[RMDB]
RNA sequence: GGGAACGACUCGAGUAGAGUCGAAAAGAUAUGGAGUGGCAGUCUGUGAAGCUAGCUACCCACCUCGGAAACGAGAGGCUAGUGGAGACUGGCACUCCUAAGUCAAAUCAAGCCUUCGGGCUUGAAACAUACGUUGCAGCUUCGGCUGCAACGUAUGAAAAGAAACAACAACAACAAC
Reactivity to DMS in 0.01 (KOAc 150mM, MgCl2 10mM, bicine 150mM(pH8.5), 24C), signal-to-noise 2, nucleotides 027 to 126: g000a060u010a060u000g020g000a000g020u000g000g010c000a010g000u000c000u000g000u010g000a100a160g000c010u000a010g010c010u000a160c220c150c100a110c220c030u020c000g010g000a020a040a050c000g000a010g020a090g020g000c000u000a010g000u000g000g000a020g000a010c010u000g000g000c020a010c000u000c000c000u000a000a070g000u000c030a090a150a080u030c000a020a020g000c000c000u000u000c190g030g020g000c010u000u000g010a010a140a190
Reactivity to 2A3 in 0.01 (KOAc 150mM, MgCl2 10mM, bicine 150mM(pH8.5), 24C), signal-to-noise 1, nucleotides 027 to 126: g020a010u040a020u120g000g000a010g020u000g030g300c010a000g030u000c000u090g300u020g240a000a000g040c000u010a000g040c010u100a180c180c040c010a210c100c000u030c020g000g030a030a010a010c020g010a010g000a030g050g000c000u010a020g000u010g000g010a020g000a030c010u000g010g000c000a000c010u000c000c000u000a000a000g030u000c030a010a000a170u060c000a000a000g000c010c020u090u150c300g060g010g000c000u000u010g010a040a020a000